RNA sequence: GGGAACGACUCGAGUAGAGUCGAAAAGUGGUCGAGUGCGAAGCACUGGGGUAGAGAAAUAAAGAGAGAGAGAACUCCCCCGUCAGUCAGUCACUCUCUGUCUGAAUCUCUCUCUCAAAGACCACGAGCUAUAGCAGUCCUUCGGGACUGCUAUAGCAAAAGAAACAACAACAACAAC
Reactivity to DMS in 0.01 (KOAc 150mM, MgCl2 10mM, bicine 150mM(pH8.5), 24C), signal-to-noise 1, nucleotides 027 to 126: g030u010g000g010u000c050g000a040g010u010g000c000g000a130a080g000c000a020c010u010g000g000g000g030u100a180g010a080g000a030a040a030u030a040a220a090g000a100g000a010g050a000g010a000g000a120a190c170u020c020c000c000c030c030g000u030c030a000g010u000c050a000g040u050c260a060c070u010c000u000c000u000g020u040c000u000g000a120a100u000c030u000c000u010c020u000c000u020c000a010a070a140g000a070c020c000a000c000g040a040
Reactivity to 2A3 in 0.01 (KOAc 150mM, MgCl2 10mM, bicine 150mM(pH8.5), 24C), signal-to-noise 2, nucleotides 027 to 126: g000u000g000g000u000c050g040a020g000u020g010c080g190a150a140g000c020a000c000u010g000g000g060g060u160a010g000a000g060a130a210a030u160a000a230a020g020a000g000a000g000a000g000a000g000a030a020c010u040c050c000c000c010c060g100u060c000a030g030u000c010a000g020u010c050a030c080u080c030u010c000u010g090u010c000u000g040a140a100u010c000u000c000u010c000u000c000u000c000a000a030a000g010a000c000c000a000c000g000a040